[RMDB]
RNA sequence: GGGAACGACUCGAGUAGAGUCGAAAACUCACCUGGCGACUCGUCGUCGAGGUCGACGAAGGGUCCUCAGCAGAGCACCGGCAGGAGGCGCUAUGCAGGAACGCUAGGGGUCCUCCAGCGGAGGACUACUUAUCGUUCUGUUCGCAGAACGAUAAGUAAAAGAAACAACAACAACAAC
Reactivity to 2A3 in 0.01 (KOAc 150mM, MgCl2 10mM, bicine 150mM(pH8.5), 24C), signal-to-noise 4, nucleotides 027 to 126: c010u010c010a020c010c000u010g000g010c010g020a020c010u000c020g020u010c010g020u010c020g060a210g110g300u280c020g010a010c000g010a020a020g030g010g000u000c010c010u030c030a020g000c000a010g010a010g030c010a020c050c000g120g040c150a130g040g230a090g070g000c020g010c020u030a040u060g010c010a010g060g050a070a020c040g000c010u020a020g010g030g020g000u020c000c000u020c020c000a160g110c110g090g010a000g010g020a000c010u010
Reactivity to DMS in 0.01 (KOAc 150mM, MgCl2 10mM, bicine 150mM(pH8.5), 24C), signal-to-noise 4, nucleotides 027 to 126: c020u000c030a150c080c010u000g000g010c140g000a280c010u000c020g010u010c030g010u000c020g020a300g020g000u000c020g000a030c020g010a050a010g020g000g000u000c020c030u010c090a080g030c040a080g000a040g010c030a070c010c030g010g020c190a140g000g000a110g010g020c030g000c020u000a050u000g010c030a080g010g010a060a140c070g010c030u000a030g000g000g000g000u000c000c000u000c000c010a150g020c210g000g000a010g010g010a030c010u000

Source information: This 177-nucleotide RNA was probed chemically with 2A3 and DMS. For 2A3, 7,708 sequencing reads were counted. Conditions: 150 mM KOAc, 10 mM MgCl2 and 150 mM bicine (pH 8.5), 24 C. Source: RMDB library VIROID, as collected in RNAgym. DMS (dimethyl sulfate) methylates the pairing face of unpaired adenines and cytosines. Reactivities are rounded to 0.1 and cut off at 0 and 3. Reactivities are given for positions 27 through 126. DMS adducts were read by reverse transcription with MarathonRT. The DMS profile rests on 4,029 reads.